[RMDB]
RNA sequence: GGGAACGACUCGAGUAGAGUCGAAAAGGAGAGAAGAGGGUAGAAGUAGGUAUAAAAUAGAAUUUGAUUACAGUAAGGUUUAGGUGCACCUUAUUGAGUUAUUAAUCACUAACUCUUUUACUAUUAAAACAGGUCCAAAAAGAAACACAUUACCUAAAGGUGAGUAAUUAUUCGUAAUUACUCACCUAAAAGAAACAACAACAACAAC
Reactivity to 2A3 in 0.01 (KOAc 150mM, MgCl2 10mM, bicine 150mM(pH8.5), 24C), signal-to-noise 3, nucleotides 027 to 156: g010g000a000g000a000g000a050a030g030a040g020g010g000u040a010g020a020a010g030u060a020g020g010u040a040u120a100a070a050a040u080a020g050a060a090u090u030u100g030a030u010u100a060c030a040g010u000a000a000g010g010u050u040u100a010g040g000u060g010c020a000c010c000u000u010a010u020u020g000a010g020u050u060a060u080u090a060a010u050c020a010c040u030a060a010c010u010c000u010u040u030u060a040c010u040a060u270u110a030a060a050a040c050a030g010g040u090c030c030a060a070a000a030a040g050a040a090a010c040a000c010a070u220u270a070c220c020u040a160a070
Reactivity to DMS in 0.01 (KOAc 150mM, MgCl2 10mM, bicine 150mM(pH8.5), 24C), signal-to-noise 2, nucleotides 027 to 156: g000g000a090g020a100g010a080a110g000a110g020g000g050u000a070g030a090a080g020u000a040g030g010u000a080u010a100a080a090a140u000a100g010a070a080u000u000u000g000a060u000u000a120c010a050g030u010a030a030g000g010u000u000u000a030g020g030u000g000c130a070c030c010u000u000a010u000u020g000a150g020u000u030a070u020u010a020a090u000c040a050c150u000a030a060c040u000c010u000u030u000u000a110c050u010a100u010u010a010a090a030a070c030a050g000g010u000c020c050a000a100a090a060a140g010a070a090a030c040a040c070a090u000u010a100c050c040u000a030a110
The data come from the RNA Mapping Database (RMDB), library OK3TST. The record gives the reactivity of an RNA of 207 nucleotides to 2A3 and DMS. 2A3 adducts were read by reverse transcription with SuperScript II with manganese. The reactions ran in a buffer of 150 mM KOAc, 10 mM MgCl2 and 150 mM bicine (pH 8.5), at 24 C.